The record gives the reactivity of an RNA of 207 nucleotides to 2A3.

RNA sequence: GGGAACGACUCGAGUAGAGUCGAAAACUGCACUCCGUAGCGGCAUCUACGUUAAAAGGUCCAGUUUAAUUAUAACUGCAAAAAAUAAUAACAAUUCUUACGCUUUAGCUGCUUAAUAGGCGCUUAACGUAGAUCCUCCUAGGCUUGUCCGUGGUCUGAAUCGUUCUAUCUUCGGAUAGAACGAUUCAAAAGAAACAACAACAACAAC
Reactivity to 2A3 in 0.01 (KOAc 150mM, MgCl2 10mM, bicine 150mM(pH8.5), 24C), signal-to-noise 2, nucleotides 027 to 156: c050u090g000c000a020c090u050c000c020g000u010a000g020c010g000g000c020a020u070c030u000a000c030g040u090u000a110a000a000a000g040g020u010c000c000a000g010u010u080u120a130a040u110u060a120u050a120a030c010u020g000c020a000a030a060a100a030a060u150a060a030u090a060a060c030a040a170u090u020c030u080u080a060c050g090c030u140u070u090a020g000c030u160g000c000u170u020a110a000u160a220g070g000c000g020c000u010u030a010a000c000g020u000a020g010a050u030c000c020u000c010c020u100a090g010g010c020u020u070g090u090c040c030g030u060g010g020u050c050u030
The data come from the RNA Mapping Database (RMDB), library ARCHII. Values cover nucleotides 27 to 156.